Conditions: 150 mM KOAc, 10 mM MgCl2 and 150 mM bicine (pH 8.5), 24 C. Chemical mapping of a 207-nucleotide RNA with 2A3 and DMS. For DMS the reverse transcriptase was MarathonRT. For DMS, 9,806 sequencing reads were counted.
[RMDB]
RNA sequence: GGGAACGACUCGAGUAGAGUCGAAAAAGUCAGUUCGCUGACUAUAGAAAAGUGGAGCAACACUUGUGCGUGAAGUGGGUCAGGGGAGGAAUCCAGCAGCCCUAAGCGAUUGUCAGGUGUGUGCUCUUUUUUUGUUACGUGCGAUCUUCGGAUCGCAAUUCAUUCUAAUAUUCGUAUUAGAAUGAAUAAAAGAAACAACAACAACAAC
Reactivity to 2A3 in 0.01 (KOAc 150mM, MgCl2 10mM, bicine 150mM(pH8.5), 24C), signal-to-noise 3, nucleotides 027 to 156: a000g010u000c000a010g010u050u100c140g010c100u010g010a010c030u070a080u150a200g120a010a110a010a010g170u220g020g000a020g030c000a020a010c000a000c010u010u010g010u040g000c000g010u070g030a150a150g110u170g050g010g020u080c010a020g000g090g000g000a010g020g110a040a080u010c010c000a010g000c000a000g000c000c000c000u020a060a010g020c010g020a050u140u300g050u100c010a010g000g000u000g000u050g040u020g010c000u030c000u020u010u010u000u000u000u010g020u010u060a060c100g010u020g000c000g000a000u000c000u040u030c190g060g010a000u000c010g000c000a000
Reactivity to DMS in 0.01 (KOAc 150mM, MgCl2 10mM, bicine 150mM(pH8.5), 24C), signal-to-noise 3, nucleotides 027 to 156: a060g020u000c000a030g040u000u000c300g020c010u000g020a040c020u000a120u010a090g000a080a050a070a090g020u010g010g010a080g000c020a110a030c010a010c010u000u010g060u000g010c030g010u000g010a120a100g020u000g000g020g010u010c030a300g020g000g000g010a100g010g010a150a180u000c020c010a060g010c070a240g020c010c010c000u000a070a200g020c020g010a080u000u000g010u000c020a030g000g010u000g020u000g010u000g040c000u000c000u010u000u000u000u000u000u000g000u000u000a080c100g020u000g010c000g000a010u000c000u000u020c290g030g010a010u000c000g020c000a000